[RMDB]
RNA sequence: GGGAACGACUCGAGUAGAGUCGAAAAUGGAUCUGCAACAACGCCAUAUAUCCGCAGAUCCUAAGGAUGUAUGGACAACUGAUCCGAGAGGAUCUACAUUAAGGCGAAGGUCAAAUCUACGUUAAUACCGACCUGAAGCCGAAGGUAUUAACGAACAGCCGUCAUUAUCAUUCGUGAUAAUGACGGCAAAAGAAACAACAACAACAAC
Reactivity to 2A3 in 0.01 (KOAc 150mM, MgCl2 10mM, bicine 150mM(pH8.5), 24C), signal-to-noise 2, nucleotides 027 to 156: u160g000g000a000u000c000u020g030c030a040a060c020a100a060c150g080c020c000a030u010a010u010a020u050c010c010g000c010a010g000a020u020c000c000u140a180a040g000g000a000u000g000u020a000u040g000g010a060c010a040a030c090u020g000a010u010c000c000g000a010g000a000g030g020a000u000c020u030a060c060a120u080u210a080a080g020g020c050g040a040a070g000g040u030c000a020a070a140u080c090u180a100c040g000u000u000a000a000u000a000c000c000g000a010c010c020u060g030a000a000g020c000c030g000a020a000g000g000u000a000u010u010a010a010c010g010a040a010c080a030
The record gives the reactivity of an RNA of 207 nucleotides to 2A3. Source: RMDB library OK3TST, as collected in RNAgym. The 2A3 profile rests on 1,341 reads.